[RMDB]
RNA sequence: GGGAACGACUCGAGUAGAGUCGAAAAUCUUCUCCUUCAGGAUAAGAGUAUAAAGAAUGUCCCAGACUAGAUGUCAUGAGUCUAGACCCGUGUUAAGGGAGAACCUGCCAGGUGCAACAGAGUGGGACGUGACCUGAUAAGGCAGGGGACCAAGGUAAUCGUCAUAGGAUUUCGAUCCUAUGACGAUAAAAGAAACAACAACAACAAC
Reactivity to DMS in 0.01 (KOAc 150mM, MgCl2 10mM, bicine 150mM(pH8.5), 24C), signal-to-noise 1, nucleotides 027 to 156: u000c030u000u010c070u000c020c020u010u000c100a080g010g030a080u000a070a080g010a080g000u000a180u000a110a100a060g020a140a080u010g000u000c010c000c000a090g010a190c000u000a020g010a040u000g040u000c240a150u000g010a120g000u000c030u010a060g000a160c010c000c000g030u010g020u000u020a040a110g010g030g010a140g000a160a110c020c000u010g010c020c010a170g010g000u000g040c080a050a110c100a060g010a130g000u000g010g060g020a100c000g020u000g010a090c010c000u020g010a100u010a110a150g020g010c010a000g010g000g010g010a220c040c020a080a060g000g010u000a120
Reactivity to 2A3 in 0.01 (KOAc 150mM, MgCl2 10mM, bicine 150mM(pH8.5), 24C), signal-to-noise 3, nucleotides 027 to 156: u010c000u020u000c010u010c010c000u180u260c090a090g050g010a040u030a050a020g030a010g070u170a120u220a290a090a030g080a060a100u130g000u020c020c010c000a030g030a040c010u010a010g010a020u110g090u260c050a100u100g090a010g040u000c000u020a010g050a190c030c020c000g120u150g040u240u120a170a130g020g000g000a050g040a020a010c000c000u000g000c010c000a040g030g020u100g150c060a070a040c030a050g140a040g180u140g030g020g010a010c040g000u020g000a030c000c010u010g020a100u050a270a080g030g000c000a000g000g000g000g010a040c000c030a010a060g090g000u030a160